RNA sequence: GGGAACGACUCGAGUAGAGUCGAAAAGAGCUGGACAACGCUCGACUUUGGAUGUUUGCGCACCUCACGCACAAGCGACUUAAUGCGGUCGUUUUGACGAUAAUCAUCCUGGGGCAGCUGGUGCGACCCCGUCGUGGGUAUUCGUACCCACGACGGGAAAAGAAACAACAACAACAAC
Reactivity to DMS in 0.01 (KOAc 150mM, MgCl2 10mM, bicine 150mM(pH8.5), 24C), signal-to-noise 2, nucleotides 027 to 126: g000a050g000c030u000g000g010a290c210a040a130c130g030c000u000c000g000a120c090u000u000u020g030g000a140u010g000u010u010u000g020c040g010c140a170c030c130u030c140a140c080g000c010a020c050a030a000g000c000g000a000c060u000u000a040a140u030g030c300g090g000u000c000g000u000u000u060u010g010a120c050g060a120u010a100a080u000c040a100u000c000c110u000g010g030g000g020c000a060g000c100u000g000g040u000g000c000g010a270c160
Reactivity to 2A3 in 0.01 (KOAc 150mM, MgCl2 10mM, bicine 150mM(pH8.5), 24C), signal-to-noise 3, nucleotides 027 to 126: g030a000g030c090u140g000g080a060c020a190a050c180g020c000u000c010g030a010c010u060u070u050g110g030a060u020g060u100u130u090g000c010g000c000a010c030c030u040c040a070c050g030c000a000c010a100a020g020c000g020a010c000u050u120a100a050u250g070c070g040g000u000c000g020u050u050u100u080g080a080c060g020a020u160a140a050u180c020a010u020c000c020u040g000g020g040g010c000a030g000c040u010g000g030u030g020c050g040a060c000
Record summary:
This 177-nucleotide RNA was probed chemically with DMS and 2A3. 2A3 adducts were read by reverse transcription with SuperScript II with manganese. DMS adducts were read by reverse transcription with MarathonRT. The DMS profile rests on 1,348 reads. The RNA was probed in 150 mM KOAc, 10 mM MgCl2 and 150 mM bicine (pH 8.5) at 24 C.